[RMDB]
RNA sequence: GGGAACGACUCGAGUAGAGUCGAAAAGUGAUUAUCACCUAUGUCCGGAUCAAUUGCCUCAAUCUGGAAUUGAGAUCAUGAACUAUUAAAUGUUAUCUCAAUGGCAAUGGUAACACCAACAUUAAUAGAGUCAUUUACGGUUCGCCGUAAAUGACUCAAAAGAAACAACAACAACAAC
Reactivity to 2A3 in 0.01 (KOAc 150mM, MgCl2 10mM, bicine 150mM(pH8.5), 24C), signal-to-noise 3, nucleotides 027 to 126: g040u010g020a300u010u080a020u050c010a030c010c020u080a110u240g100u010c030c000g000g000a040u000c030a040a130u300u160g160c030c010u140c010a070a020u000c020u020g050g010a020a030u000u000g000a000g000a020u050c000a010u010g100a060a100c090u260a110u300u100a130a020a000u070g010u010u090a020u020c000u000c000a030a050u010g000g000c000a010a010u040g000g000u000a000a000c040a000c000c000a080a110c010a130u070u200a150a040u110a120
Reactivity to DMS in 0.01 (KOAc 150mM, MgCl2 10mM, bicine 150mM(pH8.5), 24C), signal-to-noise 1, nucleotides 027 to 126: g060u000g000a030u040u000a010u000c000a070c210c000u000a010u010g060u000c000c000g000g000a160u000c150a040a060u000u000g000c040c010u030c220a160a010u000c080u040g120g000a100a140u000u000g000a000g000a220u140c060a080u000g000a040a040c130u000a170u000u040a190a000a100u000g060u000u000a140u000c000u000c000a080a000u000g000g000c290a180a150u000g000g000u000a030a170c060a170c010c070a000a110c110a130u080u000a000a210u000a140
Annotation: The record gives the reactivity of an RNA of 177 nucleotides to 2A3 and DMS. 2A3 adducts were read by reverse transcription with SuperScript II with manganese. The RNA was probed in 150 mM KOAc, 10 mM MgCl2 and 150 mM bicine (pH 8.5) at 24 C. Values cover nucleotides 27 to 126.